An RNA of 207 nucleotides, treated with 2A3 and read out base by base. Conditions: 150 mM KOAc, 10 mM MgCl2 and 150 mM bicine (pH 8.5), 24 C. Source: RMDB library OK3TST, as collected in RNAgym.
[RMDB]
RNA sequence: GGGAACGACUCGAGUAGAGUCGAAAACCCCGUGUGGAACACACGACUAAGCUUCGGCUUAGUAAGAGCAACUUAGUAUGGUAGGCUCCCCGGCGUGUCUCGAACCAUGCCGGGCCAAACCCAUAGGGCUGGCGGUCCCUGUGCGGUCAUUAUAUAACCAUGGGAGUCAUUUCGAUGACUCCCAUGGAAAAGAAACAACAACAACAAC
Reactivity to 2A3 in 0.01 (KOAc 150mM, MgCl2 10mM, bicine 150mM(pH8.5), 24C), signal-to-noise 1, nucleotides 027 to 156: c000c000c000c000g020u030g020u020g030g120a260a070c100a010c000a000c190g030a000c010u000a010a010g010c000u000u180c230g040g010c000u000u000a000g000u020a010a100g000a010g050c020a010a080c010u090u090a030g060u060a110u120g000g090u010a020g030g070c040u050c020c020c000c020g000g000c000g010u020g060u030c040u010c220g150a060a020c010c000a000u000g000c010c010g040g000g000c020c000a000a000a000c000c000c000a010u010a040g010g130g000c040u090g060g040c080g050g000u120c010c000c020u060g000u000g080c150g000g030u010c010a040u050u260a130u060a040u050a060a070